[RMDB]
Structure probing data (2A3 and DMS) for a 177-nucleotide construct.
The 2A3 profile rests on 22,311 reads.
2A3 adducts were read by reverse transcription with SuperScript II with manganese.
High 2A3 reactivity points to a flexible backbone, as in loops and unpaired stretches.
Values cover nucleotides 27 to 126.
RNA sequence: GGGAACGACUCGAGUAGAGUCGAAAAUAGACUUUAUUUUUCAACUGAAUUUCUUCUGCAAGAAGCAUUUAUUUGCAUUUGAAAUUUGUGUUUGAUAAGUGCUCAACUUUUUGCCUUUGCGAAAUAGCGUAUAUGAUGAUUUCGAUCAUCAUAUACGAAAAGAAACAACAACAACAAC
Reactivity to 2A3 in 0.01 (KOAc 150mM, MgCl2 10mM, bicine 150mM(pH8.5), 24C), signal-to-noise 9, nucleotides 027 to 126: u140a010g050a030c030u110u140u130a110u100u160u040u040u050c030a040a010c020u040g010a010a010u020u010u000c000u010u000c010u010g000c000a010a020g070a110a060g140c110a160u070u200u170a170u060u110u040g000c000a000u000u000u030g030a030a020a020u020u020u030g190u010g040u070u060u060g030a030u040a030a040g060u060g070c040u020c060a100a180c060u050u050u030u080u120g040c020c010u120u100u180g060c060g090a080a110a110u140a090g050
Reactivity to DMS in 0.01 (KOAc 150mM, MgCl2 10mM, bicine 150mM(pH8.5), 24C), signal-to-noise 4, nucleotides 027 to 126: u020a120g010a060c050u030u010u030a020u010u010u010u020u010c040a020a040c030u000g000a010a010u000u000u000c000u000u000c010u000g020c000a020a010g000a090a170g020c230a110u030u030u030a040u030u000u000g000c000a000u000u010u010g000a010a010a010u000u000u010g010u020g000u010u000u010g000a020u020a010a020g010u000g020c100u000c020a070a130c140u010u010u010u010u010g000c020c130u000u000u020g010c070g010a020a030a070u030a050g010